Source: RMDB library OK3TST, as collected in RNAgym. An RNA of 207 nucleotides, treated with 2A3 and read out base by base. For 2A3 the reverse transcriptase was SuperScript II with manganese. Values cover nucleotides 27 to 156. Conditions: 150 mM KOAc, 10 mM MgCl2 and 150 mM bicine (pH 8.5), 24 C.
[RMDB]
RNA sequence: GGGAACGACUCGAGUAGAGUCGAAAAUACCUCUGGUAGAAUUCGGCUGUGAAUCCAUCUGGUCCUGGACUCUUUUUGGUUGGUAAGCUAUUGAUUAUUGCCACAAUUUCAGCUCCUGUUAUUGGUCUAUUCAGAGAUUCAACUUCUUCCUGGUUUAGCAUAAAUCCACUUUCGAGUGGAUUUAUGCAAAAGAAACAACAACAACAAC
Reactivity to 2A3 in 0.01 (KOAc 150mM, MgCl2 10mM, bicine 150mM(pH8.5), 24C), signal-to-noise 1, nucleotides 027 to 156: u120a070c010c000u040c000u060g020g040u020a040g030a130a080u200u140c100g010g000c010u030g020u040g220a050a050u030c030c040a070u030c030u110g010g040u100c000c030u030g020g030a050c010u040c010u160u090u020u090u100g030g000u090u010g010g020u010a030a000g030c070u080a100u140u160g060a070u040u220a030u090u040g030c030c000a030c010a030a090u040u110u050c000a030g010c060u000c000c000u080g030u080u080a080u100u120g000g000u020c020u030a010u080u080c030a010g040a030g040a070u110u000c030a040a030c010u040u000c000u020u080c000c000u010g040g030u050u090u090a010